[RMDB]
RNA sequence: GGGAACGACUCGAGUAGAGUCGAAAAUUACUACCAUCGGUCCUCACCACUAGAUCGGUGUUAUGCUUUGUUGGGAUAGCAGGCCGUGCCAGUUGGACAGCCAAGGUCCACCUCUGGUUCGGCACACGAUUACAUUAUGGUUCGCCAUAAUGUAAUCAAAAGAAACAACAACAACAAC
Reactivity to 2A3 in 0.01 (KOAc 150mM, MgCl2 10mM, bicine 150mM(pH8.5), 24C), signal-to-noise 4, nucleotides 027 to 126: u080u030a040c030u020a030c020c000a010u000c010g010g000u000c010c020u060c040a120c070c000a040c090u090a030g020a100u040c030g030g020u020g050u110u090a140u100g040c040u080u100u140g070u060u110g070g020g040a060u080a040g050c070a050g070g020c010c000g010u010g000c000c000a010g000u030u010g010g010a010c010a030g130c120c030a090a040g140g000u010c000c000a020c010c040u060c000u010g020g000u020u010c010g000g010c020a000c010a000c010
Reactivity to DMS in 0.01 (KOAc 150mM, MgCl2 10mM, bicine 150mM(pH8.5), 24C), signal-to-noise 7, nucleotides 027 to 126: u010u010a120c090u000a110c140c010a010u000c020g010g000u000c030c060u010c070a170c100c080a090c120u000a080g000a050u010c040g010g010u000g000u010u000a050u000g010c050u000u000u000g010u010u010g010g010g020a130u000a060g020c060a090g000g010c010c000g010u000g000c000c010a030g020u000u010g000g000a020c020a100g020c150c210a070a110g000g000u000c000c010a040c300c120u000c010u000g000g010u000u000c010g010g010c020a030c110a040c160